RNA sequence: GGGAACGACUCGAGUAGAGUCGAAAAGGAAGGGGAAAGAGGAGGGUGGAAGAAAAAGGGGUGGGCCCCCCCGAUCCGAGGGGCCCGACUGCCAAGUUUGGAGAGCACCUCGGGCCGAAGGGUUGAGCGACUCGCCUGUUCGCAGGCGAGAAAAGAAACAACAACAACAAC
Reactivity to 2A3 in 0.01 (KOAc 150mM, MgCl2 10mM, bicine 150mM(pH8.5), 24C), signal-to-noise 1, nucleotides 027 to 129: g000g020a000a060g050g000g000g070a200a000a000g030a080g000g000a050g000g120g000u090g000g100a100a010g020a060a060a000a050a000g020g050g010g000u160g010g040g030c020c000c000c000c040c000c000g000a000u000c000c040g000a030g000g020g040g000c050c000c000g010a020c010u020g130c020c000a020a240g060u100u010u060g030g000a140g000a030g080c000a040c020c010u000c000g010g000g000c040c000g030a070a030g050g000g030u030u080g020a040g020c010g010a030
Reactivity to DMS in 0.01 (KOAc 150mM, MgCl2 10mM, bicine 150mM(pH8.5), 24C), signal-to-noise 1, nucleotides 027 to 129: g030g040a020a020g230g090g000g050a060a020a040g040a020g000g000a110g180g000g000u060g010g010a130a080g030a070a050a000a010a050g020g000g000g040u060g060g030g010c150c010c000c000c020c050c000g050a100u030c070c020g010a080g050g000g000g050c010c000c020g030a120c070u000g010c180c170a030a140g070u030u000u000g060g000a150g040a090g040c070a090c090c000u000c040g000g040g040c120c050g040a120a040g000g000g040u090u090g000a120g010c070g010a090